[RMDB]
RNA sequence: GGGAACGACUCGAGUAGAGUCGAAAAGCACCGCCUUGAGCAAGGGUGCGAACACUUGACGGGUCUAACCAGACGUCUUGUGGAUUAGGACGUUCUAGGCGUAGUACGCUACCUAGUUCGUCCGAAAGGGUAGCAUGUGGUUCGCCACGUGCUACCCAAAAGAAACAACAACAACAAC
Reactivity to DMS in 0.01 (KOAc 150mM, MgCl2 10mM, bicine 150mM(pH8.5), 24C), signal-to-noise 6, nucleotides 027 to 126: g000c010a000c010c000g000c000c010u020u010g030a090g010c130a160a090g000g000g020u000g000c020g000a120a090c050a010c000u000u010g000a010c020g000g010g020u020c020u010a070a120c200c200a150g000a170c020g000u000c010u000u000g000u000g000g000a100u020u000a080g010g010a010c000g010u010u000c000u000a000g010g010c300g020u010a060g040u010a150c160g000c030u010a120c010c000u000a000g010u000u000c000g020u010c000c010g000a010a050a050
Reactivity to 2A3 in 0.01 (KOAc 150mM, MgCl2 10mM, bicine 150mM(pH8.5), 24C), signal-to-noise 9, nucleotides 027 to 126: g000c000a000c010c010g160c010c000u080u090g100a070g040c040a010a010g030g000g000u000g000c000g000a080a010c020a000c010u010u010g010a010c020g100g090g230u050c030u060a100a090c070c040a050g070a090c020g010u010c000u010u020g010u020g030g020a060u050u150a050g000g000a000c000g000u000u000c000u010a010g050g000c040g030u010a010g050u040a050c110g010c040u010a020c000c000u000a000g010u000u000c000g000u000c000c000g000a010a010a010
The record gives the reactivity of an RNA of 177 nucleotides to DMS and 2A3. The data come from the RNA Mapping Database (RMDB), library OK1LIB. Reactivities are given for positions 27 through 126.